[RMDB]
RNA sequence: GGGAACGACUCGAGUAGAGUCGAAAAGAUAUGGACGAGUUCACGGGAGCUCGUGGUCGGAAACGACCACCAGAGCGACGAUCGUGACUCGUCCUAAGUCAAACGAGCAUUGUUCGCAAUGCUCGAACUCAUCUUUUCCGUUCGCGGAAAAGAUGAGAAAAGAAACAACAACAACAAC
Reactivity to 2A3 in 0.01 (KOAc 150mM, MgCl2 10mM, bicine 150mM(pH8.5), 24C), signal-to-noise 2, nucleotides 027 to 126: g000a000u060a070u150g000g000a000c010g020a000g040u300u200c040a000c020g050g010g060a130g010c020u000c020g010u010g000g000u000c010g000g000a040a010a000c010g010a000c000c010a010c060c030a100g000a000g000c010g130a080c060g050a120u080c000g020u000g010a000c010u000c000g000u020c000c000u010a000a000g000u010c020a000a000a130c000g000a010g000c010a020u000u010g050u110u150c300g020c180a060a010u000g000c000u000c000g000a010a010
Reactivity to DMS in 0.01 (KOAc 150mM, MgCl2 10mM, bicine 150mM(pH8.5), 24C), signal-to-noise 2, nucleotides 027 to 126: g000a030u000a280u010g000g010a020c000g010a010g010u010u020c010a010c000g010g040g000a080g030c010u000c010g010u000g010g000u000c000g000g010a060a090a160c020g000a030c000c000a010c060c300a130g000a020g010c000g000a100c300g000a050u010c020g020u000g000a000c020u000c000g000u000c010c000u000a010a060g010u010c040a090a090a300c030g010a010g000c020a010u010u010g000u010u010c230g000c020a010a010u000g000c000u000c000g010a040a070